[RMDB]
RNA sequence: GGGAACGACUCGAGUAGAGUCGAAAAGACAACGAAACUCAAAUGCUGGGCAUGAAGUUUGUUGAUGGAACGCGUGCUGAUGAUAUAAUGUGGAAAGAUGAAGAAGUUAAUGUCGUCCCCAAAAUUGAUGGUAGACAACAUUCGUGUUGUCUACCAUAAAAGAAACAACAACAACAAC
Reactivity to DMS in 0.01 (KOAc 150mM, MgCl2 10mM, bicine 150mM(pH8.5), 24C), signal-to-noise 3, nucleotides 027 to 126: g020a070c080a040a030c060g000a050a030a080c060u000c030a070a070a090u010g010c060u010g050g010g040c040a050u010g020a080a040g020u000u020u000g000u000u010g000a100u000g010g010a100a050c100g000c050g000u010g000c050u010g000a100u020g010a080u010a050u000a040a090u020g000u020g010g010a040a030a090g000a070u020g000a060a070g000a060a040g010u030u000a080a080u000g010u000c010g000u000c000c010c000c100a050a020a050a070u010u020g010
Reactivity to 2A3 in 0.01 (KOAc 150mM, MgCl2 10mM, bicine 150mM(pH8.5), 24C), signal-to-noise 6, nucleotides 027 to 126: g050a010c050a100a000c100g110a080a010a020c000u010c110a080a050a070u140g000c020u070g000g050g030c000a010u030g080a090a070g000u010u030u050g090u060u100g070a090u090g040g080a050a020c020g010c020g070u040g020c030u020g030a060u030g030a000u040a030u020a180a150u180g020u070g040g110a050a060a040g050a030u110g060a000a050g040a040a010g030u040u120a050a080u170g000u010c020g020u010c000c010c000c000a060a060a030a140u120u250g020

An RNA of 177 nucleotides, treated with DMS and 2A3 and read out base by base. Values are in units of 0.01, from 0 to 300, in steps of 10. For 2A3, 4,085 sequencing reads were counted. DMS adducts were read by reverse transcription with MarathonRT. Conditions: 150 mM KOAc, 10 mM MgCl2 and 150 mM bicine (pH 8.5), 24 C. It was measured as part of the RMDB library OK1LIB.